Source: RMDB library OK2TRN, as collected in RNAgym. Structure probing data (2A3 and DMS) for a 177-nucleotide construct. For 2A3, 674 sequencing reads were counted. Reactivities are rounded to 0.1 and cut off at 0 and 3. DMS adducts were read by reverse transcription with MarathonRT.
[RMDB]
RNA sequence: GGGAACGACUCGAGUAGAGUCGAAAACUGAAAGCUAUAGGUAAGAAAAUAAGGGUUCCUGGCAUGAUUGAACUAUGGAAGACCUUGUCUCAAACAAUGCUGCUGCCCCACUUCUAAAGGGUUGGUGGUUUAUGUCCCUUUUCGAAGGGACAUAAACAAAAGAAACAACAACAACAAC
Reactivity to 2A3 in 0.01 (KOAc 150mM, MgCl2 10mM, bicine 150mM(pH8.5), 24C), signal-to-noise 1, nucleotides 027 to 126: c020u030g070a120a020a000g000c010u010a040u180a090g000g030u110a060a110g000a030a190a090a070u080a000a090g010g000g020u030u000c030c000u020g060g010c000a050u110g100a110u230u290g030a070a020c030u070a100u300g030g070a010a090g010a050c010c060u000u020g030u030c000u000c000a110a200a090c030a000a070u130g010c030u020g000c010u040g000c000c040c000c000a040c080u150u000c090u190a080a090a060g050g000g010u050u140g050g000u070g000
Reactivity to DMS in 0.01 (KOAc 150mM, MgCl2 10mM, bicine 150mM(pH8.5), 24C), signal-to-noise 2, nucleotides 027 to 126: c040u010g020a110a100a060g000c040u000a060u000a110g020g000u000a060a160g020a060a080a060a080u000a060a040g000g020g020u000u000c010c030u000g010g030c030a090u000g010a160u000u000g010a080a090c040u000a030u020g010g000a060a020g000a110c020c020u000u010g010u010c050u000c040a120a090a070c090a050a060u020g010c020u000g000c040u000g000c050c000c000c060a090c140u010u010c120u010a090a070a110g000g000g030u010u010g020g010u000g010